[RMDB]
RNA sequence: GGGAACGACUCGAGUAGAGUCGAAAACACUUGCUGUGAUCCAUACUGUAGGAAACAUGCGCCAAAGACACAUUUAAUUUCAUUGACAGGAUUGCAUUAUCGAACUCUUUUUCAUUAUUUAGGCAGCCUCCCGUACAUGAUUCGUCAUGUACGGGAGAAAAGAAACAACAACAACAAC
Reactivity to 2A3 in 0.01 (KOAc 150mM, MgCl2 10mM, bicine 150mM(pH8.5), 24C), signal-to-noise 7, nucleotides 027 to 126: c040a010c030u070u160g030c000u010g030u040g070a070u030c020c000a060u060a130c050u120g070u140a050g040g050a030a040a030c050a050u130g000c010g010c020c040a090a160a040g100a020c030a020c010a070u050u140u210a120a110u070u170u120c100a060u060u080g090a060c030a050g050g020a050u040u080g010c020a030u030u030a070u180c050g050a080a080c010u020c040u040u050u080u110u030c060a040u010u220a090u090u110u070a050g060g020c000a020g040c000
Reactivity to DMS in 0.01 (KOAc 150mM, MgCl2 10mM, bicine 150mM(pH8.5), 24C), signal-to-noise 2, nucleotides 027 to 126: c070a070c100u000u000g010c100u040g000u000g000a100u000c040c040a070u020a110c090u080g000u000a020g000g000a070a040a030c190a010u030g030c050g010c010c060a050a050a080g010a090c050a050c110a040u000u030u020a020a060u000u040u010c030a050u040u000g010a050c080a120g030g000a080u050u010g010c150a000u000u030a080u000c040g000a020a060c100u000c020u000u010u030u000u020c100a070u020u000a030u000u000u030a070g010g000c000a000g000c130